[RMDB]
RNA sequence: GGGAACGACUCGAGUAGAGUCGAAAAGUAGGGUUAGAUUAGUAGGUCUAGGAUCUGCGUGUAGUGAGUGCCAAGGUGUUAUCCCUUGGGUGUUAGACUCGGCUACUCUGACAGCCUGAAGGGAUGACCGCGGUACGAGGUUCGCCUCGUGUCGCGGAAAAGAAACAACAACAACAAC
Reactivity to DMS in 0.01 (KOAc 150mM, MgCl2 10mM, bicine 150mM(pH8.5), 24C), signal-to-noise 5, nucleotides 027 to 126: g010u000a050g000g000g000u000u020a020g000a070u010u020a090g010u030a050g010g000u000c020u000a110g010g010a060u010c030u000g000c050g000u000g010u000a040g000u000g010a050g010u000g010c040c030a090a080g000g010u010g010u020u010a070u010c060c000c000u000u000g000g000g010u000g010u010u010a060g000a030c060u010c060g000g020c040u010a060c210u000c000u000g000a060c050a020g020c000c000u000g010a050a050g000g000g000a030u010g010a160
Reactivity to 2A3 in 0.01 (KOAc 150mM, MgCl2 10mM, bicine 150mM(pH8.5), 24C), signal-to-noise 6, nucleotides 027 to 126: g060u060a030g000g020g030u050u030a000g030a110u070u060a020g090u030a020g050g050u000c010u010a020g040g100a090u030c010u030g020c040g010u050g010u030a060g020u020g110a030g010u040g060c020c020a040a030g040g010u040g050u230u150a050u070c000c000c000u000u010g010g020g010u030g030u000u040a020g000a020c010u010c060g030g010c030u050a020c010u000c010u010g010a020c010a040g200c010c000u060g120a040a010g020g000g000a030u030g030a010
This 177-nucleotide RNA was probed chemically with DMS and 2A3. The DMS profile rests on 22,860 reads. Reactivities are given for positions 27 through 126.